[RMDB]
RNA sequence: GGGAACGACUCGAGUAGAGUCGAAAAGGAAUAACACCAUAUGUUUGUUCUGUUACAGAUUGUAACUGUUCAGACGUGAAAAAGUUAUGGUUGUCAGGUUUACGAUACUUUUGUGUGGACCACAAACCAUCGUAGGUAUUUUCGAAUACCUACGAUGAAAAGAAACAACAACAACAAC
Reactivity to 2A3 in 0.01 (KOAc 150mM, MgCl2 10mM, bicine 150mM(pH8.5), 24C), signal-to-noise 5, nucleotides 027 to 126: g070g010a090a080u070a080a020c010a030c020c010a020u030a030u160g030u000u050u010g010u020u000c030u010g010u010u000a010c010a040g210a300u210u210g090u010a020a010c010u010g010u000u010c000a010g020a020c020g040u120g000a100a070a010a020a040g050u090u030a020u050g090g000u080u070g050u090c110a060g000g100u010u030u050a030c040g030a070u100a230c100u070u190u190u140g130u020g010u040g050g030a020c010c020a030c050a030a070a030c030
Reactivity to DMS in 0.01 (KOAc 150mM, MgCl2 10mM, bicine 150mM(pH8.5), 24C), signal-to-noise 9, nucleotides 027 to 126: g010g010a160a060u000a040a020c020a070c020c020a130u010a030u000g010u000u000u000g010u000u000c010u000g000u000u000a010c000a120g010a180u010u010g020u000a010a020c000u000g010u000u000c000a000g010a010c010g030u000g000a060a060a070a100a100g010u000u000a010u000g010g010u000u000g010u000c120a120g010g000u000u000u000a050c060g010a120u010a090c180u000u010u000u010g020u010g010u010g000g010a110c040c010a090c130a050a050a100c300